RNA sequence: GGGAACGACUCGAGUAGAGUCGAAAAGGCGGUGCUUAUCGUCUGUUUGCUGGCAAGGAUCAGAAGAAGGAUUCCGCGGGGCAGAAGACCAGACAGCCGGAAAAGCCACCACAAGAUAAGCAGAAGACACUAAAUGCGGAUUCGUCCGCAUUUAGUGAAAAGAAACAACAACAACAAC
Reactivity to DMS in 0.01 (KOAc 150mM, MgCl2 10mM, bicine 150mM(pH8.5), 24C), signal-to-noise 4, nucleotides 027 to 126: g010g010c010g000g000u000g030c000u010u000a020u010c030g000u010c010u020g010u000u020u010g000c030u000g000g040c050a140a250g000g010a090u000c050a070g010a140a170g000a130a150g000g000a070u030u010c040c060g020c250g030g000g030g000c050a060g010a090a050g030a120c110c070a030g000a050c100a070g000c020c040g000g010a030a030a050a170g000c060c000a210c040c030a030c140a070a130g010a020u010a020a030g000c050a080g000a100a090g000a220
Reactivity to 2A3 in 0.01 (KOAc 150mM, MgCl2 10mM, bicine 150mM(pH8.5), 24C), signal-to-noise 6, nucleotides 027 to 126: g040g010c030g000g040u070g010c010u020u030a010u040c020g030u010c020u000g100u030u080u090g150c030u040g030g080c050a140a130g020g020a040u040c050a030g200a300a050g050a090a050g250g030a050u180u050c010c010g020c030g060g030g010g000c010a020g040a180a040g040a090c030c020a010g060a080c010a000g040c010c000g000g000a050a100a000a010g040c020c000a050c010c000a060c040a040a010g010a050u030a040a010g000c040a000g040a120a020g070a050